An RNA of 177 nucleotides, treated with DMS and read out base by base. For DMS the reverse transcriptase was MarathonRT.
RNA sequence: GGGAACGACUCGAGUAGAGUCGAAAAGACACCAAGGGUGGGGCUGUUCGCCCAUUAAAAGGGAUCCUGAGAUGGGUUCACUACGUCGCGAGACAGUAGGGUUGCUUCUCUGUGGGAGUGUUCAAUGAAACGUCGAACUUUUCGAAGUUCGACGUUUAAAAGAAACAACAACAACAAC
Reactivity to DMS in 0.01 (KOAc 150mM, MgCl2 10mM, bicine 150mM(pH8.5), 24C), signal-to-noise 2, nucleotides 027 to 126: g030a070c030a160c060c050a130a050g010g020g010u020g000g010g000g020c020u020g050u000u030c090g040c000c000c000a030u000u030a040a040a040a060g000g020g010a070u000c010c060u080g000a220g000a050u030g030g040g010u000u040c070a180c020u020a000c070g020u020c010g000c300g000a270g000a040c000a030g010u000a030g000g000g010u060u030g000c060u000u000c050u010c040u040g000u010g000g000g000a150g050u000g010u040u030c040a070a210u030g000